This 177-nucleotide RNA was probed chemically with 2A3 and DMS. For DMS the reverse transcriptase was MarathonRT. For 2A3, 2,564 sequencing reads were counted. The reactions ran in a buffer of 150 mM KOAc, 10 mM MgCl2 and 150 mM bicine (pH 8.5), at 24 C. Reactivities are given for positions 27 through 126.
RNA sequence: GGGAACGACUCGAGUAGAGUCGAAAAGAUAUGGAUCCUUCAUGAGCUUGGAUUUACGACUAGGGAAUCCACAUCGGAAACGAUGUGUUCUCCCUAGUCGUUGUCAGCUUGGAAGGAUCCUAAGUCACUACGUCUAACACUUCGGUGUUAGACGUAGAAAAGAAACAACAACAACAAC
Reactivity to 2A3 in 0.01 (KOAc 150mM, MgCl2 10mM, bicine 150mM(pH8.5), 24C), signal-to-noise 1, nucleotides 027 to 126: g000a020u040a030u200g010g000a020u000c020c020u000u000c150a300u230g010a010g000c080u230u240g270g040a100u300u240u300a000c000g010a010c000u000a010g000g010g020a020a040u070c030c000a000c010a000u020c000g020g000a070a120a030c020g000a020u010g030u000g010u060u000c030u000c010c010c010u000a000g000u000c000g000u000u000g000u000c000a000g050c020u000u000g010g030a000a000g000g020a000u000c000c000u010a000a000g020u020c000a000
Reactivity to DMS in 0.01 (KOAc 150mM, MgCl2 10mM, bicine 150mM(pH8.5), 24C), signal-to-noise 1, nucleotides 027 to 126: g000a060u000a300u000g010g020a020u000c000c010u000u000c000a160u010g030a020g010c000u050u000g070g010a050u020u010u000a020c000g010a030c000u000a010g000g020g000a050a060u000c270c000a000c000a000u000c010g030g000a230a090a230c000g010a010u000g020u000g000u000u000c070u000c000c000c030u000a000g000u000c000g000u000u000g010u000c010a050g000c010u020u010g010g020a010a050g020g000a000u000c000c000u000a000a070g000u000c070a300